[RMDB]
RNA sequence: GGGAACGACUCGAGUAGAGUCGAAAAGAUAUGGAAUCCGUGAACUACGAGGCAUUCGGAAACGAAUGAGAACUCGCACGUGAUUCCUAAGUCAAAACUGUCCCAGUCGUUCGCGACUGGGACAGAACUAAACAGACCUGUUCGCAGGUCUGUUUAGAAAAGAAACAACAACAACAAC
Reactivity to 2A3 in 0.01 (KOAc 150mM, MgCl2 10mM, bicine 150mM(pH8.5), 24C), signal-to-noise 2, nucleotides 027 to 126: g000a000u020a000u090g020g000a000a030u020c010c030g000u010g010a230a290c150u300a160c300g030a010g170g000c020a000u000u000c000g010g050a040a020a020c000g010a000a010u010g000a040g110a160a110c000u020c020g020c020a000c010g070u280g020a000u000u000c010c000u000a020a090g020u000c010a060a020a200a300c000u030g000u050c040c000c000a010g020u020c010g000u060u150c300g010c030g210a040c000u070g020g000g020a020c000a000g000a000a000
Reactivity to DMS in 0.01 (KOAc 150mM, MgCl2 10mM, bicine 150mM(pH8.5), 24C), signal-to-noise 2, nucleotides 027 to 126: g010a060u000a220u000g000g000a000a020u000c000c010g010u010g010a130a130c300u000a300c080g020a010g010g000c000a010u000u010c000g020g000a010a070a050c000g010a000a000u010g000a290g040a120a280c010u000c000g000c010a000c000g000u020g000a020u000u000c010c000u000a000a130g020u000c040a090a110a180a150c010u000g040u000c000c000c000a000g020u000c000g040u000u040c140g030c050g020a010c010u000g000g000g010a010c000a030g000a020a250